[RMDB]
RNA sequence: GGGAACGACUCGAGUAGAGUCGAAAAGCAGUUCCAGAGUGUGAGGACUCUGAACUCGAAGGUAGAUGACCUCCUCACAGGUCAAAGUCAUAUUGAUAGGCAAGUAUCAGGAUGACACUACCGACAUACUUGUCUAUGUCAACUCGAGGAACUGAGAUACCGUUUUAGUGUUCGCACUAAAACGGUAAAAAGAAACAACAACAACAAC
Reactivity to DMS in 0.01 (KOAc 150mM, MgCl2 10mM, bicine 150mM(pH8.5), 24C), signal-to-noise 2, nucleotides 027 to 156: g000c000a040g010u010u010c000c020a180g000a050g020u010g000u000g020a200g000g020a090c010u000c010u000g010a050a040c020u000c010g030a130a090g000g000u000a090g000a300u000g010a140c020c070u000c000c030u000c070a200c250a040g030g020u000c030a080a080a100g020u000c000a060u000a120u000u010g010a060u000a050g000g010c110a010a040g000u000a000u000c050a230g000g020a150u000g010a090c080a210c060u000a150c000c000g000a130c190a010u000a000c000u010u000g000u000c000u000a010u000g010u000c030a100a060c030u000c000g000a190g060g000a050a030c010u010g000a120g000a300
Reactivity to 2A3 in 0.01 (KOAc 150mM, MgCl2 10mM, bicine 150mM(pH8.5), 24C), signal-to-noise 4, nucleotides 027 to 156: g030c010a000g010u000u010c010c000a010g020a000g010u080g020u010g020a030g020g030a010c010u000c010u070g060a090a050c030u000c050g030a060a040g050g020u120a040g010a210u060g040a020c010c010u010c020c000u030c020a020c030a030g000g030u030c020a080a000a000g030u030c020a020u090a060u180u130g030a010u010a020g070g010c060a060a010g030u030a010u020c050a030g040g030a060u080g130a030c020a040c130u090a070c010c000g000a010c010a010u010a000c010u040u050g000u010c020u040a020u020g020u010c030a050a030c040u000c020g030a110g030g000a000a000c010u010g010a010g010a060

Overview
Structure probing data (DMS and 2A3) for a 207-nucleotide construct. It was measured as part of the RMDB library OK3TST. For DMS the reverse transcriptase was MarathonRT.